[RMDB]
RNA sequence: GGGAACGACUCGAGUAGAGUCGAAAAGAAUGAGGAAAACGGGCGGGAUGGUAGAGAAGAGCGAGCCUCCCGAUCCGAGGUUUCCCUGAACCUAUUGGAUCUGGAGACUCCGACCCUAGGGGGUCAACCAUAAGUGAAGGUUCGCCUUCACUUAUGGAAAAGAAACAACAACAACAAC
Reactivity to DMS in 0.01 (KOAc 150mM, MgCl2 10mM, bicine 150mM(pH8.5), 24C), signal-to-noise 3, nucleotides 027 to 126: g000a120a070u010g010a140g000g000a080a060a110a150c070g010g010g010c110g000g010g010a100u000g000g010u010a060g010a140g010a110a060g010a080g010c100g000a020g020c010c000u000c000c000c050g000a000u000c020c010g000a010g000g000u000u000u010c080c110c100u010g000a050a020c020c010u010a110u000u020g020g000a020u000c000u000g000g000a040g010a010c010u010c020c070g010a070c010c000c010u010a080g020g000g010g000g010u000c060a070a170
Reactivity to 2A3 in 0.01 (KOAc 150mM, MgCl2 10mM, bicine 150mM(pH8.5), 24C), signal-to-noise 3, nucleotides 027 to 126: g060a030a090u190g010a120g020g040a020a130a030a100c070g000g110g050c120g000g010g040a060u080g000g080u130a070g020a030g040a300a050g030a040g090c120g000a010g030c010c010u010c000c000c000g000a010u000c000c000g020a000g010g000u010u030u040c130c050c000u030g010a010a010c000c000u040a180u090u300g010g000a010u030c000u020g000g000a010g010a020c010u000c030c010g050a040c020c010c010u040a060g210g130g020g000g000u030c010a010a050

The data come from the RNA Mapping Database (RMDB), library VIROID. This 177-nucleotide RNA was probed chemically with DMS and 2A3. The 2A3 profile rests on 4,431 reads. Values cover nucleotides 27 to 126. For DMS the reverse transcriptase was MarathonRT.